[RMDB]
RNA sequence: GGGAACGACUCGAGUAGAGUCGAAAAGUAGAGAUAAGAGACUGUAGCUCUAUGGCCACCAAGAGCACGGAUAACAAAAACAAUGUAUUCUUCGAUGAGCCUGCCUGAAUGAGUUUCAAAGCAGGCAGCGAAGCUAUAAGUUCGCUUAUAGCUUCGCAAAAGAAACAACAACAACAAC
Reactivity to 2A3 in 0.01 (KOAc 150mM, MgCl2 10mM, bicine 150mM(pH8.5), 24C), signal-to-noise 2, nucleotides 027 to 126: g030u030a020g020a000g010a110u060a200a060g030a030g030a070c030u050g010u040a030g000c000u000c000u050a130u080g030g010c080c030a110c020c010a070a010g000a010g000c030a000c010g000g020a060u090a130a080c080a030a120a020a000a000c040a030a070u110g030u030a200u060u050c020u040u060c050g120a110u090g030a040g000c020c010u010g000c000c010u030g010a020a030u170g050a080g160u040u040u030c000a020a000a000g000c000a000g000g020c010a000
Reactivity to DMS in 0.01 (KOAc 150mM, MgCl2 10mM, bicine 150mM(pH8.5), 24C), signal-to-noise 2, nucleotides 027 to 126: g000u000a040g000a060g020a120u000a110a120g020a140g020a070c120u000g010u000a110g020c010u010c020u000a130u000g010g000c050c030a100c040c030a090a040g010a030g000c030a060c040g000g010a120u000a080a100c120a040a090a060a070a060c190a110a080u010g010u010a060u010u010c030u000u020c050g010a130u010g010a170g000c030c000u000g000c000c050u000g000a050a030u000g020a180g020u010u000u000c000a030a090a140g000c000a030g000g000c010a050
Notes: An RNA of 177 nucleotides, treated with 2A3 and DMS and read out base by base. 2A3 adducts were read by reverse transcription with SuperScript II with manganese. The RNA was probed in 150 mM KOAc, 10 mM MgCl2 and 150 mM bicine (pH 8.5) at 24 C.